An RNA of 177 nucleotides, treated with 2A3 and DMS and read out base by base. For 2A3 the reverse transcriptase was SuperScript II with manganese. DMS adducts were read by reverse transcription with MarathonRT. It was measured as part of the RMDB library RFMREP. Conditions: 150 mM KOAc, 10 mM MgCl2 and 150 mM bicine (pH 8.5), 24 C. The 2A3 profile rests on 6,342 reads.

RNA sequence: GGGAACGACUCGAGUAGAGUCGAAAACUGACAAAGGCUUCGGCUUCAUCACUCCUGACGAUGGCUCUAAAGAUGUGUUCGUACACUUCUCUGCUAUCCAGAACGAUGGUUACAAAUCUCUGGACGAUCAUAUCGGUAUGUUCGCAUACCGAUAUGAAAAAGAAACAACAACAACAAC
Reactivity to 2A3 in 0.01 (KOAc 150mM, MgCl2 10mM, bicine 150mM(pH8.5), 24C), signal-to-noise 5, nucleotides 027 to 126: c020u050g080a030c090a060a140a040g020g020c000u040u040c050g040g010c000u080u050c040a040u020c010a020c030u040c010c020u020g000a020c060g040a040u060g050g000c010u000c030u130a160a140a020g040a030u050g020u000g020u070u180c080g060u140a010c030a010c030u060u020c030u010c000u070g040c010u040a030u020c000c000a000g020a070a020c070g010a040u020g020g070u110u090a080c050a040a090a030u030c030u020c010u040g010g050a050c040g030a060
Reactivity to DMS in 0.01 (KOAc 150mM, MgCl2 10mM, bicine 150mM(pH8.5), 24C), signal-to-noise 5, nucleotides 027 to 126: c070u010g000a120c160a070a100a100g010g000c120u010u000c080g010g020c030u000u020c060a070u000c060a080c060u000c020c020u000g010a090c120g020a090u010g000g000c030u000c100u000a080a110a050g010a040u000g020u010g010u010u010c190g020u010a110c050a030c040u000u000c020u000c060u010g000c060u000a090u000c010c010a020g000a030a080c150g010a020u000g020g010u020u020a090c130a060a130a030u000c010u000c020u000g000g010a080c180g000a080